Overview: Chemical mapping of a 207-nucleotide RNA with 2A3.
RNA sequence: GGGAACGACUCGAGUAGAGUCGAAAAGCUCCUUCAGGUGAACGAUCUCGGUUGUUUCUCUGAAGGCAUGAUCACCCCGUCCGAUGGGGAAGUUCGUGCUUCCGUCGAACGCGAAAGUCGGACGGCGAAAACGAGUUACCGUUCGCGGUAACUCGAACACAACGAGGUUGUUCGCAACCUCGUUGUGAAAAGAAACAACAACAACAAC
Reactivity to 2A3 in 0.01 (KOAc 150mM, MgCl2 10mM, bicine 150mM(pH8.5), 24C), signal-to-noise 1, nucleotides 027 to 156: g000c040u040c000c000u000u000c010a050g060g000u080g090a010a010c020g030a020u040c040u080c230g180g020u000u070g000u020u120u010c000u000c010u000g000a010a010g010g020c040a060u030g020a050u090c080a180c020c040c000c000g000u000c000c010g030a020u040g050g000g050g090a010a050g040u000u110c040g060u110g020c020u080u070c040c030g130u120c060g050a080a010c060g040c060g100a050a010a000g000u010c000g000g010a010c000g010g000c030g030a130a160a000a080c020g000a010g000u000u000a000c000c000g000u070u100c260g040c030g150g000u000a000a000c000u010c000g000a000a000
The 2A3 profile rests on 738 reads.